[RMDB]
RNA sequence: GGGAACGACUCGAGUAGAGUCGAAAAAUGGGGCCGAUCACGCCAUAGGAGAAGAAGAUGCCGGCAAAGGUGCCGACGAGUGCGGCGCCGAUGAGAUGGCCCAGCACUUCCGGCGACUGGUCGAGCACCAGCGUAAUCAGUUCGCUGAUUACGCUGGAAAAGAAACAACAACAACAAC
Reactivity to 2A3 in 0.01 (KOAc 150mM, MgCl2 10mM, bicine 150mM(pH8.5), 24C), signal-to-noise 1, nucleotides 027 to 126: a010u080g040g020g010g010c000c010g010a000u010c000a000c010g000c010c000a060u190a130g060g050a160g020a140a040g020a060a000g090a090u070g000c000c000g000g000c000a000a050a050g030g000u000g020c000c000g050a060c010g110a070g060u300g080c020g000g020c000g020c010c000g010a000u000g010a070g020a050u160g010g000c000c040c010a000g000c000a000c000u030u000c020c000g000g020c010g020a150c140u000g010g000u000c000g010a060g010c040a040
Reactivity to DMS in 0.01 (KOAc 150mM, MgCl2 10mM, bicine 150mM(pH8.5), 24C), signal-to-noise 2, nucleotides 027 to 126: a050u000g030g000g010g010c000c000g020a020u000c020a030c050g030c030c010a140u010a120g000g000a150g000a070a100g020a070a180g000a130u000g010c010c100g000g000c020a020a060a300g000g010u000g030c000c020g000a010c030g030a060g010u030g000c000g000g010c080g030c010c000g000a100u000g000a060g020a160u030g010g000c010c080c020a090g030c100a100c020u000u000c040c080g010g010c000g000a090c180u000g010g000u000c020g000a100g030c040a130